RNA sequence: GGGAACGACUCGAGUAGAGUCGAAAAUACUCUCCUCGUGAUUUCUUUUCUUUUUUUAUCGUCAUCCUCUCUGAAUGUAUUUAUUACGCAUGGCUUUUAUUCAUUGCUUUCUAACUGUGAUGGGAGUCGUAUUGUGGCAAUUCGUUGCCACAAUACGAAAAGAAACAACAACAACAAC
Reactivity to 2A3 in 0.01 (KOAc 150mM, MgCl2 10mM, bicine 150mM(pH8.5), 24C), signal-to-noise 3, nucleotides 027 to 126: u110a020c000u000c000u020c010c000u000c000g040u040g060a100u040u020u030c000u000u100u030u060c010u100u080u050u010u020u060u160a100u090c040g030u000c030a060u060c040c010u050c000u010c010u040g060a070a020u030g090u080a080u070u250u020a130u100u090a090c070g000c030a030u030g020g010c020u030u110u040u160a080u140u110c030a030u000u120g030c000u070u050u050c010u070a040a110c000u040g000u010g060a030u070g020g010g000a000g030u020